RNA sequence: GGGAACGACUCGAGUAGAGUCGAAAAGUCCCAUACUUCGGUAUGGGACAAAUAAACUUGACUAAAGCCUGUCAAGAAUCACCACAGGCAAAGUGGUCUAAAAAACUAACUUGUUCGCAAGUUAGAAUCAGAUAACAUCGUUCGCGAUGUUAUCUGAAAAAGAAACAACAACAACAAC
Reactivity to 2A3 in 0.01 (KOAc 150mM, MgCl2 10mM, bicine 150mM(pH8.5), 24C), signal-to-noise 1, nucleotides 027 to 126: g010u000c000c010c000a000u000a010c000u000u100c230g100g030u000a010u010g000g000g000a000c010a000a020a000u020a010a030a010c040u000u020g030a010c000u030a030a030a030g240c000c010u030g020u000c040a060a040g020a080a070u170c070a050c070c020a000c000a030g150g000c030a120a020a020g040u040g040g000u100c050u150a160a130a030a000a000a000c010u000a000a000c000u000u020g010u120u110c300g000c080a000a000g020u020u040a020g030a000a080
Reactivity to DMS in 0.01 (KOAc 150mM, MgCl2 10mM, bicine 150mM(pH8.5), 24C), signal-to-noise 1, nucleotides 027 to 126: g000u000c000c000c000a000u020a000c000u000u030c210g020g020u000a020u000g010g000g020a000c000a020a040a030u000a100a060a070c020u010u000g000a000c000u000a100a070a050g020c020c000u000g000u000c010a060a020g000a300a190u020c210a000c070c020a010c000a060g020g050c240a020a170a100g040u010g000g010u010c160u030a000a000a050a050a130a130c000u020a020a010c000u000u000g020u000u000c260g070c000a000a000g000u000u000a000g020a070a080